This 177-nucleotide RNA was probed chemically with 2A3 and DMS.
Conditions: 150 mM KOAc, 10 mM MgCl2 and 150 mM bicine (pH 8.5), 24 C.

[RMDB]
RNA sequence: GGGAACGACUCGAGUAGAGUCGAAAAGAUAUGGACAUUGGGAGGAACUGUCGGAAACGACAGAAUUCCGACGAUCGGGUGUCCUAAGUCAAACGCCGAUAAGAACGUUCGCGUUCUUAUCGGCGAAGAGAAUGUUCAACUUCGGUUGAACAUUCUCAAAAGAAACAACAACAACAAC
Reactivity to 2A3 in 0.01 (KOAc 150mM, MgCl2 10mM, bicine 150mM(pH8.5), 24C), signal-to-noise 1, nucleotides 027 to 126: g010a010u040a040u140g010g000a010c000a010u090u300g090g030g050a060g030g040a030a040c000u020g020u000c010g000g030a090a050a050c040g000a000c030a000g010a030a100u040u000c000c000g010a080c020g020a040u080c140g200g000g040u050g000u000c000c000u030a170a010g040u030c030a050a030a130c050g000c030c020g000a000u010a000a010g010a030a000c010g030u080u080c300g050c010g170u020u000c010u000u010a000u000c000g000g000c000g010a010a000
Reactivity to DMS in 0.01 (KOAc 150mM, MgCl2 10mM, bicine 150mM(pH8.5), 24C), signal-to-noise 2, nucleotides 027 to 126: g000a020u010a260u000g000g000a020c010a070u000u050g020g040g000a140g000g000a050a030c010u000g000u000c000g010g010a040a070a170c020g000a020c020a000g000a100a110u000u000c000c010g000a200c130g000a090u000c120g000g020g020u000g020u000c010c010u000a050a120g000u000c050a100a060a290c020g010c000c000g020a010u010a000a010g000a010a010c010g010u000u030c200g000c000g020u000u000c000u010u000a000u000c000g000g000c000g000a010a010